RNA sequence: GGGAACGACUCGAGUAGAGUCGAAAAGAUAUGGAUCAUGGACAUGACGGAUCACUCGGAAACGAGUGGGCACGUCAACAGCCCGCUGAUCCUAAGUCAAAGUGUAACUCCUUCGGGAGUUACACAAUCCAUAUAUGAAGUUCGCUUCAUAUAUGGAAAAAGAAACAACAACAACAAC
Reactivity to 2A3 in 0.01 (KOAc 150mM, MgCl2 10mM, bicine 150mM(pH8.5), 24C), signal-to-noise 9, nucleotides 027 to 126: g030a030u090a040u170g000g010a010u010c000a020u150g000g000a040c070a130u150g010a000c010g020g010a050u040c010a000c010u000c000g020g030a070a080a060c020g000a000g010u040g000g010g000c270a050c130g020u000c010a010a030c040a010g040c000c000c000g030c020u000g000a000u020c000c000u020a140a010g040u020c070a150a060a070g010u000g000u000a000a010c000u000c010c000u040u050c120g110g000g000a000g000u000u000a000c000a000c000a000a010
Reactivity to DMS in 0.01 (KOAc 150mM, MgCl2 10mM, bicine 150mM(pH8.5), 24C), signal-to-noise 9, nucleotides 027 to 126: g010a040u000a300u000g000g000a010u000c000a040u010g000g000a010c050a240u000g010a010c010g000g000a170u010c000a010c000u000c000g010g000a110a100a180c000g000a020g020u000g000g000g010c180a130c010g010u000c010a030a080c240a140g010c000c000c000g020c200u000g010a010u000c000c000u010a040a090g000u000c030a080a120a150g010u000g000u000a010a010c000u000c000c000u000u010c180g020g000g010a020g010u000u000a000c000a000c000a050a050
The record gives the reactivity of an RNA of 177 nucleotides to 2A3 and DMS. The DMS profile rests on 25,671 reads. For 2A3 the reverse transcriptase was SuperScript II with manganese. It was measured as part of the RMDB library TTRDEL. The reactions ran in a buffer of 150 mM KOAc, 10 mM MgCl2 and 150 mM bicine (pH 8.5), at 24 C. Values are in units of 0.01, from 0 to 300, in steps of 10.